Structure probing data (2A3 and DMS) for a 177-nucleotide construct. The RNA was probed in 150 mM KOAc, 10 mM MgCl2 and 150 mM bicine (pH 8.5) at 24 C. The 2A3 profile rests on 3,675 reads. For DMS, 7,929 sequencing reads were counted.
RNA sequence: GGGAACGACUCGAGUAGAGUCGAAAACGAAGUCGGGCAUGGCCUUAGUCCUAGUGGUACGCGAUAGGUCGUCGAAUUCCGUGGGUGAUGGAUAUGACUAUUUCGUAGCUGGUCGCCAGAAUCAAUCUACGUCCAUACGAUUCGUCGUAUGGACGUAAAAAGAAACAACAACAACAAC
Reactivity to 2A3 in 0.01 (KOAc 150mM, MgCl2 10mM, bicine 150mM(pH8.5), 24C), signal-to-noise 5, nucleotides 027 to 126: c050g050a040a040g040u050c050g030g020g000c050a070u060g040g030c000c020u050u050a010g030u020c000c000u040a030g040u040g110g010u040a010c020g000c030g060a040u050a080g080g050u070c020g020u010c010g030a040a150u190u000c030c040g040u090g060g080g040u110g050a080u120g020g000a020u020a040u170g050a020c030u010a130u050u100u090c020g020u030a050g020c040u040g040g040u040c010g010c010c020a010g060a030a050u110c070a040a020u040c030
Reactivity to DMS in 0.01 (KOAc 150mM, MgCl2 10mM, bicine 150mM(pH8.5), 24C), signal-to-noise 4, nucleotides 027 to 126: c070g010a080a070g010u020c050g000g000g010c070a060u000g010g020c020c020u000u010a110g010u000c000c040u000a100g010u010g000g050u000a060c160g000c060g010a060u010a050g030g000u010c050g000u010c050g000a050a160u020u030c020c020g010u020g000g000g050u020g000a070u010g000g010a070u020a050u020g000a030c070u010a060u000u000u010c040g030u020a050g020c060u020g000g000u010c040g010c020c040a080g010a070a130u020c080a070a140u010c100